[RMDB]
RNA sequence: GGGAACGACUCGAGUAGAGUCGAAAAACGCAUCAUACGUGAUGCGAGAACUACAGUUCCGCUCCUCUAGCACACAGAGGUCAAUUGGGUGCGACCCCCCGCUCUCCCGUGGGUCAACGGGAACCAAAAAAGACCCUUUAGUUCGCUAAAGGGUCAACCCAUCGAUUAACUUCGGUUAAUCGAUGGGAAAAGAAACAACAACAACAAC
Reactivity to 2A3 in 0.01 (KOAc 150mM, MgCl2 10mM, bicine 150mM(pH8.5), 24C), signal-to-noise 1, nucleotides 027 to 156: a000c020g000c000a010u020c030a060u100a150c170g140u010g040a050u170g030c040g000a030g000a010a010c070u140a080c090a070g000u010u010c000c000g060c030u070c000c000u010c040u030a050g060c090a010c010a010c000a000g000a030g000g010u020c010a030a190u050u080g040g000g020u010g010c000g150a260c000c000c020c000c000c000g040c050u010c020u010c040c000c000g000u010g010g050g080u090c030a020a000c000g000g000g000a000a000c030c010a000a170a000a000a000a000g010a000c000c030c000u000u000u000a000g000u000u040c150g010c180u000a000a000a010g000g000g000u000c000a000a000
This 207-nucleotide RNA was probed chemically with 2A3. It was measured as part of the RMDB library M2RFPK. For 2A3 the reverse transcriptase was SuperScript II with manganese. Reactivities are given for positions 27 through 156.